[RMDB]
RNA sequence: GGGAACGACUCGAGUAGAGUCGAAAAUUGUGUCAUUUGUAUUCCAACAGCAAGUGGCACUAACUUUCGGGCAGUUGGAAUACCUGGAAGUGACUCAGUGCUGCUAAUCUAAGUACUGAGUGAACUUGUCAACUAAGAUUAGCAGUUGGCAAGUGUACCUCGAUUACCUAUUCGUAGGUAAUCGAGGAAAAGAAACAACAACAACAAC
Reactivity to 2A3 in 0.01 (KOAc 150mM, MgCl2 10mM, bicine 150mM(pH8.5), 24C), signal-to-noise 5, nucleotides 027 to 156: u120u090g000u000g000u000c010a010u010u000u010g050u060a150u210u190c120c070a090a040c040a100g020c000a000a000g000u000g000g000c000a010c000u010a020a020c000u000u000u010c010g000g010g000c030a160g010u070u100g040g040a080a050u070a070c000c000u020g000g010a010a000g010u020g050a010c000u000c000a000g000u000g000c000u000g000c030u080a090a110u110c030u110a120a000g000u010a020c000u000g000a000g000u030g000a000a020c000u000u000g000u000c010a000a000c000u040a070a050g180a300u160u190a060g130c070a010g010u000u000g000g000c000a000a000g000u000g030u050a080
Reactivity to DMS in 0.01 (KOAc 150mM, MgCl2 10mM, bicine 150mM(pH8.5), 24C), signal-to-noise 2, nucleotides 027 to 156: u000u000g020u010g020u000c030a030u000u000u000g020u000a090u000u010c060c160a180a250c110a260g040c010a030a030g020u000g030g030c000a020c020u000a020a030c030u000u000u000c000g010g010g120c020a070g000u000u000g060g000a170a100u000a030c010c030u020g030g030a000a050g030u010g020a130c000u000c010a030g050u000g060c000u000g030c080u000a030a140u020c110u000a070a060g010u000a010c000u000g000a040g010u000g020a050a020c000u000u010g000u010c000a010a000c010u000a130a160g000a290u020u000a150g040c100a070g040u020u000g000g030c000a000a030g000u000g000u000a030

Record summary:
Structure probing data (2A3 and DMS) for a 207-nucleotide construct. The DMS profile rests on 2,984 reads. It was measured as part of the RMDB library OK3TST. Values cover nucleotides 27 to 156. For DMS the reverse transcriptase was MarathonRT.